[RMDB]
RNA sequence: GGGAACGACUCGAGUAGAGUCGAAAACCAGGGAUUGUCUUCCUCUAGUUUCUUGAUCUUCUUCUUGGCCUUCCGGAGAUCCUUCUCGAGAUCAUCCACUAACUUUCUUGCAUUGACCCACUGCUCGCUAGUGGCGACUUCGGUCGCCACAAAAGAAACAACAACAACAAC
Reactivity to 2A3 in 0.01 (KOAc 150mM, MgCl2 10mM, bicine 150mM(pH8.5), 24C), signal-to-noise 4, nucleotides 027 to 129: c010c010a040g030g030g050a110u060u100g080u040c030u060u030c050c000u000c000u010a000g040u040u040u040c000u010u050g050a110u000c010u020u000c000u050u000c020u020u060g050g030c010c000u030u030c040c020g010g020a030g010a050u030c050c000u090u030c040u010c030g090a090g000a070u020c020a030u020c010c060a080c060u050a040a080c000u080u090u070c010u020u090g010c030a120u010u060g040a080c000c000c000a030c030u050g010c020u020c070g040c060u040a040
Reactivity to DMS in 0.01 (KOAc 150mM, MgCl2 10mM, bicine 150mM(pH8.5), 24C), signal-to-noise 4, nucleotides 027 to 129: c010c030a190g010g040g030a080u050u050g000u030c040u050u000c000c000u010c100u000a100g030u000u010u020c040u030u040g020a100u010c030u000u000c030u060u000c000u000u050g020g010c060c070u000u000c020c060g020g000a160g020a130u030c060c020u000u000c040u060c060g050a080g000a060u010c030a160u010c000c040a000c180u000a110a110c110u040u030u060c030u000u000g010c080a060u000u000g010a160c070c040c010a070c150u000g030c080u000c100g060c140u040a100